[RMDB]
RNA sequence: GGGAACGACUCGAGUAGAGUCGAAAAUCUCUGGUGAUAGCUGUUGAGUAAGAAGAACCAUCAGCUAGGGGUUCACAGAGAGAAGUUUAUUCUCAUGACUGCUCCCACACUAAGAGCUUGAGGUUUACGUACCUGGAUCAUUCGUGAUCCAGGUACGAAAAGAAACAACAACAACAAC
Reactivity to 2A3 in 0.01 (KOAc 150mM, MgCl2 10mM, bicine 150mM(pH8.5), 24C), signal-to-noise 2, nucleotides 027 to 126: u020c030u000c000u010g040g030u040g070a150u030a010g020c020u010g040u060u050g140a150g050u130a200a170g040a080a020g040a120a000c010c000a020u040c020a000g020c010u020a030g110g000g020g060u100u050c040a020c020a050g120a010g000a000g030a070a030g010u150u120u200a110u090u080c020u010c010a060u120g090a110c020u050g030c040u030c030c010c000a040c000a010c040u090a130a030g060a000g100c000u060u050g100a060g090g000u040u080u050a000
Reactivity to DMS in 0.01 (KOAc 150mM, MgCl2 10mM, bicine 150mM(pH8.5), 24C), signal-to-noise 2, nucleotides 027 to 126: u010c000u000c000u000g020g030u000g000a270u000a010g020c020u010g020u000u000g020a200g020u010a060a140g020a140a170g000a170a060c010c000a020u000c000a020g020c000u000a050g020g010g020g020u010u000c070a040c050a010g010a090g010a020g000a030a060g000u030u000u050a080u000u000c010u000c000a060u000g000a150c300u000g000c130u010c010c020c080a300c100a080c080u010a030a130g000a120g030c130u000u000g010a050g000g010u000u000u020a150